[RMDB]
RNA sequence: GGGAACGACUCGAGUAGAGUCGAAAAUUACUAGUCUGUGAUGAAUUGCUUUGACUUCUGACACCUCGUAUGAAAACAGCACGUGCAGUCUGAUUAUUUAGCAAGACUGAGGCUUAAAAUAAAUCAAACUAUGUAAUUGUUUCGACAAUUACAUAGUAAAAGAAACAACAACAACAAC
Reactivity to DMS in 0.01 (KOAc 150mM, MgCl2 10mM, bicine 150mM(pH8.5), 24C), signal-to-noise 8, nucleotides 027 to 126: u010u000a100c060u010a060g020u000c030u000g010u010g000a080u000g010a090a100u010u000g000c030u010u010u000g000a100c080u000u000c020u000g010a090c050a080c100c020u000c060g010u000a050u010g000a090a050a080a090c120a060g000c050a040c090g020u000g010c050a040g010u010c020u000g000a080u010u000a120u010u000u000a070g010c050a070a030g010a080c040u000g010a080g010g000c020u000u000a040a050a050a070u000a040a060a080u000c060a070a080
Reactivity to 2A3 in 0.01 (KOAc 150mM, MgCl2 10mM, bicine 150mM(pH8.5), 24C), signal-to-noise 5, nucleotides 027 to 126: u080u020a040c020u010a020g040u000c030u030g150u050g080a100u030g030a060a130u070u040g020c020u090u050u090g040a080c000u010u010c010u050g030a020c010a040c030c010u020c030g030u060a050u160g110a080a070a040a050c030a020g030c030a010c030g040u070g020c020a010g000u000c010u020g010a060u020u110a090u090u150u080a030g000c020a030a020g010a020c010u020g030a020g030g000c000u040u030a060a080a020a030u130a020a090a020u070c030a070a060